Source information:
The record gives the reactivity of an RNA of 177 nucleotides to DMS. The data come from the RNA Mapping Database (RMDB), library OK2TST.
RNA sequence: GGGAACGACUCGAGUAGAGUCGAAAACGGUCGUCUGUCUGGACUGCUACGAGAGCUUAAGACAACAAGCCUCACAGCACGAUCGCUUUGGAGUGCCCAUAUCCAGGCGGGCCUACAACUGGGUGCCCACUUUGGCGUACUUCGGUACGCCAAAGUGAAAAGAAACAACAACAACAAC
Reactivity to DMS in 0.01 (KOAc 150mM, MgCl2 10mM, bicine 150mM(pH8.5), 24C), signal-to-noise 1, nucleotides 027 to 126: c090g010g010u000c150g010u010c010u000g030u000c000u040g010g010a180c110u000g000c020u000a170c180g040a050g010a170g030c070u000u000a170a170g000a240c180a080a080c180a010a000g040c010c000u010c040a170c060a010g020c090a050c150g000a060u030c120g040c080u000u030u010g010g000a160g060u000g000c010c000c040a090u000a090u000c010c000a000g010g000c060g020g000g040c020c070u010a020c140a090a080c130u000g010g000g050u000g010c010c100